About this RNA
Chemical mapping of a 177-nucleotide RNA with DMS. Conditions: 150 mM KOAc, 10 mM MgCl2 and 150 mM bicine (pH 8.5), 24 C. For DMS, 532 sequencing reads were counted. Reactivities are given for positions 27 through 126.
[RMDB]
RNA sequence: GGGAACGACUCGAGUAGAGUCGAAAAUUAAAGGAGGAGGAGGAGUGUGUGUCUUCCCAGCUGCAGAGUAGAACCUCCGCACACACGCGAAAGCUACGAGCAGCAGCAGUGCGGAAACGGUGAAAAACGUUAGGGCACUGUUCGCAGUGCCCUAACGAAAAGAAACAACAACAACAAC
Reactivity to DMS in 0.01 (KOAc 150mM, MgCl2 10mM, bicine 150mM(pH8.5), 24C), signal-to-noise 1, nucleotides 027 to 126: u000u000a000a100a030g000g010a190g010g010a100g000g020a090g040g000a070g010u010g010u000g000u000g040u010c170u000u000c000c000c010a120g020c010u000g010c040a060g000a260g050u000a060g000a110a110c070c040u010c000c010g040c020a010c030a050c110a110c120g000c080g050a040a200a080g000c020u000a020c060g000a180g000c040a000g020c150a080g000c000a050g000u000g000c030g000g000a030a000a030c140g000g010u010g010a080a030a020a110a100